[RMDB]
RNA sequence: GGGAACGACUCGAGUAGAGUCGAAAAAGCAGUAAUAAAUGUCUUCGCGAGAAUGAACCUAGCAACACGGCUGGAAAGUAGAAUACUUCAUUAUAUCUGUACAGGAUAUGGACUACUUAUCCGAAAAGAUGCCCAUAGUGUUCGCACUAUGGGCAUCAAAAGAAACAACAACAACAAC
Reactivity to 2A3 in 0.01 (KOAc 150mM, MgCl2 10mM, bicine 150mM(pH8.5), 24C), signal-to-noise 2, nucleotides 027 to 126: a010g040c070a010g160u170a080a100u160a230a180a160u050g120u010c070u040u080c180g020c030g090a050g000a180a180u130g000a130a000c020c030u060a030g040c000a000a120c020a060c120g020g000c020u040g000g000a090a080a000g020u000a060g040a040a140u270a230c020u050u110c070a160u000u230a110u000a020u020c000u030g010u260a090c160a060g040g040a000u030a000u040g000g050a010c000u070a000c010u120u030a050u040c010c000g010a020a020a000a000
Reactivity to DMS in 0.01 (KOAc 150mM, MgCl2 10mM, bicine 150mM(pH8.5), 24C), signal-to-noise 1, nucleotides 027 to 126: a130g000c010a060g000u040a030a120u090a040a110a180u040g000u000c010u040u000c010g030c200g000a160g000a040a030u070g030a130a100c060c030u000a080g000c080a020a020c200a040c040g000g010c020u030g000g040a040a020a000g010u000a000g010a240a060u040a120c220u000u030c110a000u020u000a060u000a000u050c030u000g000u060a200c130a050g070g000a100u000a020u000g040g000a060c000u040a000c000u000u000a040u000c000c000g070a080a030a010a190
Notes:
An RNA of 177 nucleotides, treated with 2A3 and DMS and read out base by base. 2A3 is a SHAPE reagent: it acylates the 2'-hydroxyl of flexible nucleotides of all four kinds. Conditions: 150 mM KOAc, 10 mM MgCl2 and 150 mM bicine (pH 8.5), 24 C. 2A3 adducts were read by reverse transcription with SuperScript II with manganese.